[RMDB]
RNA sequence: GGGAACGACUCGAGUAGAGUCGAAAAGCUAGUCGCGUACUCGAUCGGCCACGGCCACUGGCCUCGCAUCGUACAUGAUAUCUCAGGUACCGUACGCGCAUAUGGCGCCGGCCACAUGGUACGUACGUGAUGUAGCGCGAUUCGUCGCGCUACAUCAAAAAGAAACAACAACAACAAC
Reactivity to DMS in 0.01 (KOAc 150mM, MgCl2 10mM, bicine 150mM(pH8.5), 24C), signal-to-noise 2, nucleotides 027 to 126: g020c060u000a090g000u000c030g030c070g000u010a000c030u010c090g000a050u010c070g030g000c000c010a070c210g000g010c010c050a060c210u000g020g000c030c030u010c140g010c080a050u000c090g040u000a060c040a020u050g010a060u020a050u000c060u000c100a120g010g000u010a050c130c040g000u000a000c000g020c260g060c020a070u000a030u000g010g000c000g050c180c200g000g000c010c010a020c080a070u020g010g010u000a050c060g010u010a030c070g000
Reactivity to 2A3 in 0.01 (KOAc 150mM, MgCl2 10mM, bicine 150mM(pH8.5), 24C), signal-to-noise 2, nucleotides 027 to 126: g120c090u100a050g020u080c010g010c020g010u010a010c010u030c070g090a120u030c080g040g000c020c010a040c060g150g010c060c020a080c140u090g000g000c040c040u070c040g140c020a060u030c040g040u000a020c020a080u060g030a020u150a210u050c080u010c060a070g130g000u060a050c000c030g050u020a030c040g000c020g000c040a010u040a090u210g040g000c040g000c020c020g080g040c000c000a060c000a020u110g090g000u060a030c030g000u040a030c030g030
Chemical mapping of a 177-nucleotide RNA with DMS and 2A3.
The DMS profile rests on 1,466 reads.
Conditions: 150 mM KOAc, 10 mM MgCl2 and 150 mM bicine (pH 8.5), 24 C.
In probing experiments dimethyl sulfate is read out at A N1 and C N3, which are open when not base-paired.
For 2A3, 1,699 sequencing reads were counted.